[RMDB]
RNA sequence: GGGAACGACUCGAGUAGAGUCGAAAAGGAUGCACUCAUCGCCCUCAAUUGCGGUAAGAUCGGUCAGCUUGUCCAGCCAAUGCUGCAUUCUCUAUCUCCUUCUAGCCGUUGCCAGUAUCCUCGUCGUACUACGAUUAGUCUUCGGACUAAUCGUAGUAAAAGAAACAACAACAACAAC
Reactivity to 2A3 in 0.01 (KOAc 150mM, MgCl2 10mM, bicine 150mM(pH8.5), 24C), signal-to-noise 9, nucleotides 027 to 126: g060g020a030u060g020c090a040c090u140c030a050u030c050g040c010c030c000u060c030a100a230u110u140g030c030g020g030u090a080a040g030a140u080c040g030g060u060c020a020g010c030u060u090g020u050c030c020a010g010c020c020a050a040u130g020c020u010g000c020a060u120u030c040u000c000u040a080u060c030u020c030c000u040u030c030u050a020g000c010c010g030u030u050g030c010c000a020g020u050a070u050c010c010u040c040g080u020c030g030u030
Reactivity to DMS in 0.01 (KOAc 150mM, MgCl2 10mM, bicine 150mM(pH8.5), 24C), signal-to-noise 3, nucleotides 027 to 126: g030g010a060u000g000c040a100c160u020c050a040u010c040g000c040c030c000u000c150a060a050u020u000g030c090g000g020u000a040a050g030a050u030c060g020g020u030c050a070g000c040u000u010g010u000c010c060a070g000c050c070a060a070u020g000c030u000g000c050a080u010u010c020u010c030u010a090u010c040u000c000c060u000u000c040u010a090g010c020c010g010u000u010g000c020c010a090g020u020a060u010c010c000u010c060g010u000c050g000u020